[RMDB]
RNA sequence: GGGAACGACUCGAGUAGAGUCGAAAAUUGGUAGUUACGAUUUGGCUAUCAAGAAGAUGGAUGAGGCAAUGCAGCAUGAUUCUGCACUACAACGAAGGCUAUUCAUACAACAGCAAAGCACCAUCAAUGCACUGCUUAAGUUCGCUUAAGCAGUGCAAAAAGAAACAACAACAACAAC
Reactivity to 2A3 in 0.01 (KOAc 150mM, MgCl2 10mM, bicine 150mM(pH8.5), 24C), signal-to-noise 3, nucleotides 027 to 126: u020u000g010g010u000a000g020u030u020a130c160g100a230u010u050u160g060g000c000u000a000u050c030a000a020g070a070a010g020a030u070g050g010a010u070g080a060g180g000c020a010a030u040g020c010a010g000c030a060u060g010a080u120u070c070u100g000c070a060c040u140a070c030a130a060c140g060a120a060g040g020c000u070a000u060u000c030a020u080a190c080a080a000c010a050g060c010a070a060a000g000c010a030c000c000a020u020c020a000a020
Reactivity to DMS in 0.01 (KOAc 150mM, MgCl2 10mM, bicine 150mM(pH8.5), 24C), signal-to-noise 2, nucleotides 027 to 126: u030u000g000g020u000a020g000u000u000a060c260g030a190u030u050u030g000g050c000u000a000u020c000a000a000g000a080a120g000a030u010g030g000a040u030g000a120g000g000c060a050a150u000g010c060a160g000c130a040u000g010a140u000u000c020u000g000c040a040c160u020a040c180a050a160c280g030a060a010g000g010c000u020a040u030u000c100a070u020a060c180a110a040c070a100g000c030a040a040a180g050c090a070c000c010a000u020c010a060a240

This 177-nucleotide RNA was probed chemically with 2A3 and DMS.
Conditions: 150 mM KOAc, 10 mM MgCl2 and 150 mM bicine (pH 8.5), 24 C.